[RMDB]
RNA sequence: GGGAACGACUCGAGUAGAGUCGAAAAUCGAGUGAGGGAGCCAGUCGAUCCCUCUUGCUAUAAAGAGAAAGAAUGCAUAGGAGAAGAGUUGGAAAUCGAUUUGGGGUUUUUGACAAACAAAAACGAGACGAUACUACCCAUUCGUGGGUAGUAUCGUAAAAGAAACAACAACAACAAC
Reactivity to 2A3 in 0.01 (KOAc 150mM, MgCl2 10mM, bicine 150mM(pH8.5), 24C), signal-to-noise 2, nucleotides 027 to 126: u150c060g000a040g050u100g000a050g000g000g040a000g080c000c020a000g030u000c000g070a040u050c000c000c010u030c020u000u030g000c000u020a050u130a300a110a030g180a010g030a020a100a030g050a080a000u040g060c080a040u080a080g040g060a070g050a120a000g010a020g020u100u120g010g050a000a040a150u040c030g020a030u100u030u150g070g010g020g030u070u000u000u000u000g100a080c050a000a200a010c020a000a000a030a010a020c060g060a080g000
Reactivity to DMS in 0.01 (KOAc 150mM, MgCl2 10mM, bicine 150mM(pH8.5), 24C), signal-to-noise 2, nucleotides 027 to 126: u040c000g040a130g000u010g020a050g000g000g000a150g000c040c040a040g000u020c040g000a040u010c010c000c000u000c050u020u020g030c130u030a090u010a050a060a070g000a120g040a070a190a130g020a030a030u030g010c110a060u020a040g010g000a040g020a040a040g000a100g020u020u020g000g000a040a040a060u000c010g000a060u000u010u020g000g000g000g000u000u000u010u000u010g000a160c210a040a120a060c080a030a000a020a040a040c050g000a110g000